[RMDB]
RNA sequence: GGGAACGACUCGAGUAGAGUCGAAAAUAGAAAGUUACUCAGGAAGAGACCAGAAGGGUGAAAGUUUAAGGUAGCUCAGUCGACAAUAGAGUAAACUUAACCACCGAGAGUAAAAGAGAUCUUACUCUUGUACUAAUAAGUUCGCUUAUUAGUACAAAAAAGAAACAACAACAACAAC
Reactivity to 2A3 in 0.01 (KOAc 150mM, MgCl2 10mM, bicine 150mM(pH8.5), 24C), signal-to-noise 9, nucleotides 027 to 126: u150a020g110a000a110a010g040u030u030a010c010u010c030a010g060g060a080a100g070a030g050a090c010c040a040g070a140a100g130g010g000u060g060a130a070a060g030u050u060u110a040a020g040g010u020a010g000c000u000c020a040g100u100c050g100a070c080a060a100u110a130g010a000g000u040a060a100a020c000u010u010a010a010c020c010a020c010c030g060a070g010a000g060u050a000a060a050a030g050a000g010a020u030c010u020u060a020c000u000c000
Reactivity to DMS in 0.01 (KOAc 150mM, MgCl2 10mM, bicine 150mM(pH8.5), 24C), signal-to-noise 9, nucleotides 027 to 126: u040a090g010a080a080a060g000u000u000a020c010u010c020a110g010g010a170a150g010a170g020a120c040c120a110g020a100a080g010g010g010u000g000a110a090a100g010u010u020u020a050a040g010g010u010a270g000c010u000c010a090g010u010c110g000a090c160a060a130u030a090g000a020g010u000a020a060a150c010u000u000a040a060c140c030a080c080c040g000a080g000a020g000u000a010a030a040a080g000a080g000a070u000c050u010u010a030c020u000c010
The data come from the RNA Mapping Database (RMDB), libraries RFM100 and RFMREP.
The record gives the reactivity of an RNA of 177 nucleotides to 2A3 and DMS.
The RNA was probed in 150 mM KOAc, 10 mM MgCl2 and 150 mM bicine (pH 8.5) at 24 C.
For 2A3 the reverse transcriptase was SuperScript II with manganese.
Reactivities are rounded to 0.1 and cut off at 0 and 3.